[RMDB]
RNA sequence: GGGAACGACUCGAGUAGAGUCGAAAAGGGGUCUAGUGCUAGGUUACCCACUUCGGGAGGACUGAAGCCUCCACGGUCCGAGGAUCGAAGUGAUUUCGUGUAACCUUGGACCACUAGACGGAGGCACCCAAAAGACCUAUGAUUCGUCAUAGGUCAAUCUACGAUUAGGUUUCGACCUAAUCGUAGAAAAAGAAACAACAACAACAAC
Reactivity to DMS in 0.01 (KOAc 150mM, MgCl2 10mM, bicine 150mM(pH8.5), 24C), signal-to-noise 2, nucleotides 027 to 156: g020g020g030g020u000c020u000a000g000u000g030c060u010a050g040g030u000u000a050c010c050c010a040c030u040u000c010g060g000g000a040g000g000a070c010u000g010a100a160g020c040c010u000c010c000a230c050g020g010u000c000c000g000a110g040g010a060u000c010g010a030a010g030u000g000a280u000u000u020c130g030u000g010u000a040a040c010c000u000u000g020g020a020c300c030a020c010u010a060g010a090c040g020g010a010g030g030c000a050c020c030c000a030a080a100a160g000a030c000c010u000a010u000g000a040u000u010c300g000u000c010a010u000a010g010g030u000c000a010a060
Reactivity to 2A3 in 0.01 (KOAc 150mM, MgCl2 10mM, bicine 150mM(pH8.5), 24C), signal-to-noise 4, nucleotides 027 to 156: g080g010g010g000u020c000u000a020g000u010g010c020u010a010g010g000u010u010a020c110c110c010a010c010u020u000c000g010g010g000a020g010g000a000c000u030g020a080a010g000c000c000u010c000c000a020c010g020g000u000c000c000g020a230g010g030a000u010c010g010a010a010g010u020g130a220u100u240u300c300g020u290g020u230a010a010c010c000u000u110g000g010a010c010c010a000c000u010a000g000a000c020g000g000a000g000g000c000a020c010c000c000a040a110a000a050g000a000c000c000u000a000u000g020a020u020u140c200g050u000c120a000u000a000g000g010u000c000a010a000
About this RNA:
This 207-nucleotide RNA was probed chemically with DMS and 2A3. The 2A3 profile rests on 4,314 reads. For DMS the reverse transcriptase was MarathonRT. For DMS, 5,136 sequencing reads were counted. It was measured as part of the RMDB library RNAMAK. In probing experiments dimethyl sulfate is read out at A N1 and C N3, which are open when not base-paired. 2A3 adducts were read by reverse transcription with SuperScript II with manganese.